Structure probing data (DMS) for a 177-nucleotide construct. The DMS profile rests on 756 reads. For DMS the reverse transcriptase was MarathonRT.
RNA sequence: GGGAACGACUCGAGUAGAGUCGAAAAGAAGAUGUGUUCGCACAUCUUCAAAAGCAACGACUAGGACCGGCGAGACAAAGGACCGAUUGCUAAUCGCGACGAAAACAGGCCUCUUCGGAGGCCUGAACCUAACAGGGGACUUCGGUCCCCUGUUAGGAAAAGAAACAACAACAACAAC
Reactivity to DMS in 0.01 (KOAc 150mM, MgCl2 10mM, bicine 150mM(pH8.5), 24C), signal-to-noise 1, nucleotides 027 to 126: g000a030a000g000a000u010g040u010g000u000u030c290g030c040a030c010a000u000c000u000u000c000a020a010a060a140g000c080a100a100c070g030a060c030u000a090g000g000a040c070c030g000g000c080g000a100g010a120c100a020a050a100g010g000a120c080c000g000a010u000u010g000c040u000a000a060u000c020g000c070g020a090c100g010a070a050a050a170c010a000g000g000c000c000u010c010u000u000c200g020g000a000g000g010c000c000u000g000a030a030
The data come from the RNA Mapping Database (RMDB), library M2PK50.